Structure probing data (2A3 and DMS) for a 177-nucleotide construct. The RNA was probed in 150 mM KOAc, 10 mM MgCl2 and 150 mM bicine (pH 8.5) at 24 C. For DMS, 1,939 sequencing reads were counted. The 2A3 profile rests on 2,222 reads. Source: RMDB library OK1LIB, as collected in RNAgym. 2A3 adducts were read by reverse transcription with SuperScript II with manganese.
RNA sequence: GGGAACGACUCGAGUAGAGUCGAAAAGGCGGCCCAAUCGUUCGCCAACCGAUGCUCUGGCGUACGCCCUGGGCAUGGUGACCGAGUAUGAGGCGAACGCGGCCGAAGGCUGGGCGAUGGCCACCGCGAGUUGAGUCGAAUUCGUUCGACUCAACUCAAAAGAAACAACAACAACAAC
Reactivity to 2A3 in 0.01 (KOAc 150mM, MgCl2 10mM, bicine 150mM(pH8.5), 24C), signal-to-noise 1, nucleotides 027 to 126: g010g000c010g000g010c000c000c000a030a110u130c000g010u010u000c010g000c000c000a010a000c010c000g090a010u020g000c000u000c060u070g040g000c020g110u180a080c210g030c010c000c050u120g000g000g000c000a020u020g040g000u070g030a090c020c060g010a040g060u130a140u260g210a100g000g000c000g010a000a000c000g000c010g030g000c020c010g050a110a090g030g000c060u130g020g010g050c050g080a110u120g060g000c000c000a010c000c010g020c040
Reactivity to DMS in 0.01 (KOAc 150mM, MgCl2 10mM, bicine 150mM(pH8.5), 24C), signal-to-noise 1, nucleotides 027 to 126: g010g020c010g010g060c000c030c080a090a060u050c000g000u000u000c010g010c000c000a130a130c100c020g030a030u000g020c000u000c000u000g040g040c010g020u050a030c140g000c050c040c130u000g020g030g050c000a000u010g000g010u000g000a070c100c160g000a060g000u000a050u010g000a110g000g000c040g000a000a000c030g000c280g000g020c010c020g000a020a070g000g000c070u030g030g000g000c020g000a140u000g020g000c020c030a150c010c000g000c160